[RMDB]
The data come from the RNA Mapping Database (RMDB), library OK2TRN.
This 177-nucleotide RNA was probed chemically with 2A3 and DMS.
As a SHAPE reagent, 2A3 marks flexible, mostly unpaired nucleotides at the ribose 2'-OH.
The 2A3 profile rests on 66,045 reads.
Values are in units of 0.01, from 0 to 300, in steps of 10.
The reactions ran in a buffer of 150 mM KOAc, 10 mM MgCl2 and 150 mM bicine (pH 8.5), at 24 C.
RNA sequence: GGGAACGACUCGAGUAGAGUCGAAAAUCAUGCUAUCACCAGCUAACUGGGUCUCGAUCAGUUAGUGGUGAGCGAAAGUUCACCUUGUGUCAAUGAUCGAGACGUUGACGCAAUCGUGAUAGCAUGCCUAGACGUAACUAUUCGUAGUUACGUCUAGAAAAGAAACAACAACAACAAC
Reactivity to 2A3 in 0.01 (KOAc 150mM, MgCl2 10mM, bicine 150mM(pH8.5), 24C), signal-to-noise 9, nucleotides 027 to 126: u090c000a000u000g000c000u000a000u000c000a000c010c020a010g000c000u010a100a090c020u030g060g010g070u000c010u010c020g020a020u010c000a010g050u020u130a030g030u020g020g000u000g000a000g000c000g030a080a020a000g000u010u000c000a000c000c000u030u020g140u030g070u070c050a030a070u020g010a030u050c030g000a010g000a020c000g060u000u010g020a020c030g000c010a000a070u090c040g000u000g000a000u000a000g000c000a000u000g000c000
Reactivity to DMS in 0.01 (KOAc 150mM, MgCl2 10mM, bicine 150mM(pH8.5), 24C), signal-to-noise 9, nucleotides 027 to 126: u020c010a010u000g010c000u000a000u000c000a010c000c180a270g000c010u000a060a110c060u000g010g010g010u000c030u000c030g010a050u010c000a020g010u010u010a060g020u000g000g010u000g000a000g010c000g000a100a090a140g010u000u000c000a010c000c000u000u010g010u010g000u010c140a090a060u000g000a040u000c060g010a040g000a030c010g010u000u000g000a160c210g000c010a010a060u010c220g010u000g000a010u000a010g000c000a000u000g000c300